[RMDB]
RNA sequence: GGGAACGACUCGAGUAGAGUCGAAAAGGGGUCUAGAUAUAACCUGCUCGUUUGACGUACGUUGUCAGCUGAAGCCUCCACGGCUUGGAUUUACGUACCGAGAGCAGGCUAAUAUCUAGACGGAGGCACCCAAAAACUAUCCUUUCGAGGAUAGUAAGUCCUAUAGGAUCUUCGGAUCCUAUAGGACAAAAGAAACAACAACAACAAC
Reactivity to 2A3 in 0.01 (KOAc 150mM, MgCl2 10mM, bicine 150mM(pH8.5), 24C), signal-to-noise 4, nucleotides 027 to 156: g090g010g040g010u000c000u010a010g010a000u030a000u000a040a040c000c000u000g020c000u000c010g180u120u190u300g250a200c170g000u020a000c010g000u020u010g050u060c030a050g010c010u090g020a060a000g040c000c000u060c060c040a030c030g000g000c020u120u170g090g010a030u200u160u190a010c010g000u020a030c050c080g120a050g000a000g120c000a000g000g000c000u000a000a000u000a000u000c000u000a000g000a000c000g000g000a010g010g000c000a050c020c000c010a050a080a020a010a010c000u000a000u000c010c000u040u150u160c270g100a010g000g000a000u000a000g000u000a010a040
Reactivity to DMS in 0.01 (KOAc 150mM, MgCl2 10mM, bicine 150mM(pH8.5), 24C), signal-to-noise 1, nucleotides 027 to 156: g020g010g000g000u000c010u010a010g010a030u000a020u010a080a070c000c000u000g030c000u000c010g010u000u010u000g010a140c080g030u010a010c010g040u020u020g000u010c000a170g020c010u010g010a040a140g030c030c010u000c010c070a300c080g010g030c010u050u090g020g000a070u000u000u010a030c030g010u000a030c000c040g020a300g000a030g030c010a010g010g010c000u000a060a040u000a010u000c000u000a040g020a010c010g000g010a040g110g090c010a120c010c010c010a020a010a090a180a080c010u010a000u010c010c010u010u000u020c220g030a110g020g000a030u000a000g010u000a030a130

Structure probing data (2A3 and DMS) for a 207-nucleotide construct. For 2A3 the reverse transcriptase was SuperScript II with manganese. The data come from the RNA Mapping Database (RMDB), library RNAMAK.